[RMDB]
RNA sequence: GGGAACGACUCGAGUAGAGUCGAAAAGGAUCCUUCGUAGUCAGGGUAACUGCCACCUGUACAGUUACCAGUGAUGACUAGUCAAUGUGUCAUCGUACAGGUGGAUGACGUAUUGACUUAAGGAUCGCUACAUCUAUGUAUUCGUACAUAGAUGUAGAAAAGAAACAACAACAACAAC
Reactivity to 2A3 in 0.01 (KOAc 150mM, MgCl2 10mM, bicine 150mM(pH8.5), 24C), signal-to-noise 9, nucleotides 027 to 126: g020g000a000u000c000c000u020u050c100g080u040a010g000u000c030a020g040g000g030u020a010a010c010u020g030c020c020a110c020c050u030g070u130a020c000a010g010u010u010a010c000c010a010g040u030g080a080u040g010a020c020u010a010g010u010c000a000a020u020g020u010g000u010c000a000u010c020g050u100a080c040a060g050g140u040g090g000a010u010g010a000c010g000u010a020u000u010g000a000c010u000u030a010a000g000g000a000u000c000g000
Reactivity to DMS in 0.01 (KOAc 150mM, MgCl2 10mM, bicine 150mM(pH8.5), 24C), signal-to-noise 9, nucleotides 027 to 126: g010g000a010u000c000c000u000u000c190g010u010a040g010u000c000a040g000g000g010u000a020a020c020u000g010c130c050a140c220c140u000g010u010a280c000a020g000u000u000a010c010c010a100g010u000g010a110u000g000a040c060u000a050g000u000c020a010a010u000g010u000g000u000c000a000u000c010g020u010a180c190a030g000g010u010g010g000a010u000g010a020c020g010u000a010u000u000g000a020c000u000u000a020a010g020g010a010u000c000g000

Structure probing data (2A3 and DMS) for a 177-nucleotide construct. For DMS, 125,760 sequencing reads were counted. Source: RMDB library OK2TRN, as collected in RNAgym. The reactions ran in a buffer of 150 mM KOAc, 10 mM MgCl2 and 150 mM bicine (pH 8.5), at 24 C. The 2A3 profile rests on 109,620 reads.